[RMDB]
The record gives the reactivity of an RNA of 177 nucleotides to DMS and 2A3.
The reactions ran in a buffer of 150 mM KOAc, 10 mM MgCl2 and 150 mM bicine (pH 8.5), at 24 C.
For 2A3 the reverse transcriptase was SuperScript II with manganese.

RNA sequence: GGGAACGACUCGAGUAGAGUCGAAAAGAUAUGGAUACUCGAUAGUAUGCAAUGACGUCGGAAACGAUAAGACAGCAUAUAUCGAGGUAUCCUAAGUCAAAGCCUUAACCGUUCGCGGUUAAGGCAACUAAAUCAACUUGUUCGCAAGUUGAUUUAGAAAAGAAACAACAACAACAAC
Reactivity to DMS in 0.01 (KOAc 150mM, MgCl2 10mM, bicine 150mM(pH8.5), 24C), signal-to-noise 9, nucleotides 027 to 126: g010a060u000a300u000g010g010a010u000a010c010u000c010g000a010u000a030g020u000a000u000g010c000a150a130u010g010a160c300g010u000c000g000g010a130a070a170c010g000a010u010a090a150g000a150c170a090g000c000a010u000a010u000a010u000c000g000a020g010g010u010a000u000c000c000u010a020a100g010u000c030a080a090a150g000c000c000u000u000a000a000c000c000g020u000u010c220g020c020g000g000u000u000a010a000g010g020c000a010a020
Reactivity to 2A3 in 0.01 (KOAc 150mM, MgCl2 10mM, bicine 150mM(pH8.5), 24C), signal-to-noise 9, nucleotides 027 to 126: g020a020u080a040u140g010g000a000u000a010c000u000c010g010a000u010a030g300u040a070u010g000c040a110a270u170g070a070c090g010u000c010g010g020a080a080a060c020g000a010u030a090a060g130a070c050a040g100c000a040u020a000u010a000u010c000g000a030g010g010u010a000u000c000c000u000a100a000g030u020c060a100a090a030g000c000c000u000u010a000a010c020c000g020u040u070c300g010c020g130g000u000u000a000a000g000g000c000a000a000